Notes
This 177-nucleotide RNA was probed chemically with DMS and 2A3. DMS adducts were read by reverse transcription with MarathonRT. Values cover nucleotides 27 to 126.

[RMDB]
RNA sequence: GGGAACGACUCGAGUAGAGUCGAAAAGCGGCUUGACGAGAUUGCGACUGGAACGAAGUUGUCCUGAGGGACGGGGAAGCGUUUACGUAUCAGCCAGAUCGAAAGACUCGACAGCGAGUCGCCCACCAUGUCACAGGUAGUUCGCUACCUGUGACAUAAAAGAAACAACAACAACAAC
Reactivity to DMS in 0.01 (KOAc 150mM, MgCl2 10mM, bicine 150mM(pH8.5), 24C), signal-to-noise 1, nucleotides 027 to 126: g010c100g000g010c000u000u000g000a080c050g000a150g000a010u000u000g060c020g010a070c030u050g000g000a200a140c210g000a050a000g000u000u020g000u000c200c000u020g000a160g010g000g030a150c040g080g000g000g000a000a090g020c000g010u010u050u000a130c000g000u080a020u020c130a040g000c030c000a050g000a050u080c040g040a100a190a230g000a040c000u040c000g000a060c170a300g000c140g010a000g000u050c000g060c000c000c000a070c170c290
Reactivity to 2A3 in 0.01 (KOAc 150mM, MgCl2 10mM, bicine 150mM(pH8.5), 24C), signal-to-noise 8, nucleotides 027 to 126: g070c030g020g000c030u060u120g020a020c010g000a000g040a060u110u300g030c010g030a070c020u050g030g060a070a060c050g020a110a060g090u180u160g030u050c010c000u070g070a260g040g040g030a010c020g000g020g030g060a040a020g010c000g000u010u020u040a110c030g010u090a090u180c010a000g000c010c000a020g020a110u130c090g030a060a110a030g010a030c000u010c000g020a030c030a060g060c010g000a000g000u000c000g000c010c000c000a000c010c010